[RMDB]
RNA sequence: GGGAACGACUCGAGUAGAGUCGAAAACAUCGGCUUCGGCCGAUGAAAAAAUCCUAAGUCCACAUCGUCCGCAAGGACGAUAAGUAUCGGAAACGAUACUUUUGACGUCUGAUGACCGGACGGUGGAUAUGGAAAAAAAGCAUACUUCGGUAUGCAACGACAUAGGGGGUUUCGACCCCCUAUGUCGAAAAGAAACAACAACAACAAC
Reactivity to 2A3 in 0.01 (KOAc 150mM, MgCl2 10mM, bicine 150mM(pH8.5), 24C), signal-to-noise 1, nucleotides 027 to 156: c000a000u000c000g000g000c020u000u060c230g110g000c000c000g000a000u020g010a030a000a000a000a000a000u010c000c010u040a090a050g000u000c020c000a000c000a180u170c050g000u010c000c000g050c090a090a200g020g020a010c000g000a000u000a000a010g000u010a000u000c010g040g020a090a010a020c000g000a000u000a000c000u040u010u030u080g170a080c000g000u020c000u030g130a170u050g000a080c060c020g000g000a000c010g000g010u000g000g000a030u010a100u140g010g080a050a030a040a090a020a000a000g030c000a000u000a000c000u050u070c290g050g000u020a010u000g000c030a000a020